[RMDB]
RNA sequence: GGGAACGACUCGAGUAGAGUCGAAAAGCAACAGUGCAAGCGAUGCAUUUAAUGACAGAAGAAGAUUUUAAAGUUAUGCAUAACUUGUUGGAAGACUGUGAAACCUUUAUCGCAGAGGAUGACACCAAUCGUAUUUUGGAUAAUUUUAAUGCCUUUAGUGCGAGUAAUAGUUCGCUAUUACUCGCACAAAAGAAACAACAACAACAAC
Reactivity to DMS in 0.01 (KOAc 150mM, MgCl2 10mM, bicine 150mM(pH8.5), 24C), signal-to-noise 2, nucleotides 027 to 156: g050c060a100a160c040a090g030u000g010c020a090a060g040c070g000a090u000g010c000a020u000u000u030a110a110u010g020a300c120a150g020a120a200g010a110a120g010a200u000u000u020u000a050a070a210g020u000u000a050u000g120c010a070u000a060a020c040u020u000g010u000u000g040g000a050a170g010a120c020u020g000u010g000a090a140a140c040c050u000u000u000a060u000c090g030c040a020g010a150g010g000a090u000g000a120c120a050c040c030a030a060u000c140g000u000a140u000u010u000u000g000g000a080u010a060a110u000u000u000u000a060a040u000g000c010c000u000u020u010a160
Reactivity to 2A3 in 0.01 (KOAc 150mM, MgCl2 10mM, bicine 150mM(pH8.5), 24C), signal-to-noise 4, nucleotides 027 to 156: g070c030a010a080c010a030g050u020g020c010a020a020g010c040g030a010u010g010c030a000u060u080u190a100a060u090g080a050c110a040g060a100a020g030a080a030g020a180u060u090u080u170a180a130a010g030u030u030a010u050g000c010a000u010a040a070c010u020u060g010u040u050g080g040a090a020g040a060c020u020g000u010g040a080a050a050c000c000u030u120u080a170u070c060g020c080a000g020a020g090g030a050u050g030a030c020a020c060c020a010a030u030c060g050u140a150u030u060u040u020g000g030a020u010a080a030u080u050u060u190a040a040u090g000c000c020u010u040u100a030
Structure probing data (DMS and 2A3) for a 207-nucleotide construct. The 2A3 profile rests on 2,303 reads. The RNA was probed in 150 mM KOAc, 10 mM MgCl2 and 150 mM bicine (pH 8.5) at 24 C. 2A3 adducts were read by reverse transcription with SuperScript II with manganese. DMS adducts were read by reverse transcription with MarathonRT. Reactivities are given for positions 27 through 156. For DMS, 2,449 sequencing reads were counted.